[RMDB]
Description:
An RNA of 177 nucleotides, treated with 2A3 and read out base by base. Reactivities are given for positions 27 through 126. The reactions ran in a buffer of 150 mM KOAc, 10 mM MgCl2 and 150 mM bicine (pH 8.5), at 24 C.
RNA sequence: GGGAACGACUCGAGUAGAGUCGAAAACUCAUGACACAGAAGCGCUUUUCAAUUUAGUCAAUCGUUCAAGAAAUUCACUUAGGGAAUGGUUACCUUGGGUAGAUGCAACUGAGCAACCAUCAGAUACAAUCACUCGAGGCUUCGGCCUCGAGUGAUUAAAAGAAACAACAACAACAAC
Reactivity to 2A3 in 0.01 (KOAc 150mM, MgCl2 10mM, bicine 150mM(pH8.5), 24C), signal-to-noise 1, nucleotides 027 to 126: c010u000c000a070u050g000a000c060a000c000a000g130a020a000g000c010g060c190u210u000u000u140c100a140a250u070u220u110a040g000u000c000a000a020u000c000g030u150u020c090a040a020g020a000a120a090u070u070c080a020c110u050u030a000g060g020g040a010a010u140g060g000u140u000a070c000c000u010u110g000g000g000u060a160g000a000u020g040c000a080a010c000u010g000a140g000c010a030a030c120c000a020u080c000a000g040a190u000a050c080